Description: Source: RMDB library M2PK90, as collected in RNAgym. This 177-nucleotide RNA was probed chemically with DMS and 2A3. The 2A3 profile rests on 1,457 reads. For DMS, 1,488 sequencing reads were counted.

RNA sequence: GGGAACGACUCGAGUAGAGUCGAAAAGACGAACGAAAACACAAAUGUUCCACGGUGCUGAAGGGUCCCUCACAUGAGGAUCACCCAUGUAACUCGGACAGGAUAUGCUUUUGGGAAAAAGAGAGAACAAGGCGUCAUAAUUCGUUAUGACGCCUUGAAAAGAAACAACAACAACAAC
Reactivity to DMS in 0.01 (KOAc 150mM, MgCl2 10mM, bicine 150mM(pH8.5), 24C), signal-to-noise 2, nucleotides 027 to 126: g000a040c070g010a110a100c020g020a030a050a040a070c050a040c090a050a170a050u000g000u000u000c000c030a100c150g000g000u010g010c010u000g010a050a150g020g000g010u000c080c000c000u000c030a100c240a100u000g010a020g000g010a080u000c140a050c020c000c000a070u000g000u000a020a040c050u000c120g010g000a050c040a060g000g000a110u010a020u000g000c010u000u000u000u000g040g010g010a010a010a030a100a080g000a080g000a070g000a070a100
Reactivity to 2A3 in 0.01 (KOAc 150mM, MgCl2 10mM, bicine 150mM(pH8.5), 24C), signal-to-noise 2, nucleotides 027 to 126: g070a020c040g010a110a010c050g020a010a010a150a000c110a010c010a060a070a100u090g040u150u000c000c010a050c050g040g020u050g000c030u050g040a230a170g000g000g010u000c000c000c000u000c010a220c040a170u300g000a030g020g020a040u120c020a010c040c000c000a020u070g000u050a050a020c000u000c060g000g030a010c030a010g030g000a040u080a010u160g080c020u000u030u090u090g070g000g090a050a090a030a050a000g110a000g010a000g010a030a030